This 207-nucleotide RNA was probed chemically with 2A3. As a SHAPE reagent, 2A3 marks flexible, mostly unpaired nucleotides at the ribose 2'-OH. The RNA was probed in 150 mM KOAc, 10 mM MgCl2 and 150 mM bicine (pH 8.5) at 24 C.
[RMDB]
RNA sequence: GGGAACGACUCGAGUAGAGUCGAAAAAGGGCACGCCGAGGGUGAUGGCGAAGUCCCGACCCCGGCUCGGAUCGACGUGCGCCACGCACCAGUGGGUGGCGCCCGGUUUGUCGGUGUACUGGUAGUAGGUGGAGUAGCGGUCCGCCGAGGCGAACACGGUGAUACCAUACUUCGGUAUGGUAUCACCAAAAGAAACAACAACAACAAC
Reactivity to 2A3 in 0.01 (KOAc 150mM, MgCl2 10mM, bicine 150mM(pH8.5), 24C), signal-to-noise 2, nucleotides 027 to 156: a000g030g000g010c030a040c060g020c030c020g050a160g000g150g110u100g020a140u070g040g000c040g060a070a010g050u110c000c000c020g010a060c000c000c030c000g020g000c020u040c030g090g060a050u040c040g060a080c010g040u060g000c010g030c000c000a010c000g110c010a050c040c010a050g060u030g010g140g000u050g030g010c000g100c000c000c020g100g000u050u150u190g060u070c010g050g000u040g010u030a080c040u050g050g020u000a050g020u010a100g030g080u040g040g010a060g010u050a000g100c070g010g020u010c000c000g000c000c000g030a040g000g000c020g050a030a000c040a000c070